[RMDB]
RNA sequence: GGGAACGACUCGAGUAGAGUCGAAAAAAAAAGAGCGUAAUCGCGUCAUUGAGUGACGUGAAGAUCAUCCAAGUGUGCUGUCUACAGACGUAGAUAGCGCACAAUACGCUGAUGAUCAUUCAAAAAAGAUGCUGUGUAUCUUCGGAUACACAGCAUCAAAAGAAACAACAACAACAAC
Reactivity to DMS in 0.01 (KOAc 150mM, MgCl2 10mM, bicine 150mM(pH8.5), 24C), signal-to-noise 1, nucleotides 027 to 126: a050a140a100a020a000g000a030g010c020g000u000a000a110u000c000g000c000g000u000c000a040u000u040g010a260g000u000g010a030c000g030u000g020a050a140g020a020u000c010a000u000c000c070a140a120g040u000g000u000g030c000u010g000u000c000u000a000c000a130g070a070c190g010u000a000g030a000u000a010g000c000g000c000a000c020a040a070u000a190c120g030c040u020g000a000u000g000a010u000c000a200u020u070c050a000a090a110a060a070a100
Reactivity to 2A3 in 0.01 (KOAc 150mM, MgCl2 10mM, bicine 150mM(pH8.5), 24C), signal-to-noise 2, nucleotides 027 to 126: a000a010a000a010a000g130a010g010c040g080u110a030a100u040c000g010c000g000u000c000a040u050u180g150a100g220u030g000a000c000g000u020g020a040a020g000a010u000c000a000u020c000c010a200a130g000u000g010u000g000c030u000g000u060c000u010a010c000a220g230a200c190g010u000a000g000a010u000a000g030c000g000c000a000c000a000a000u080a000c030g000c070u030g020a000u010g000a010u010c010a070u180u300c100a120a120a050a050a010a000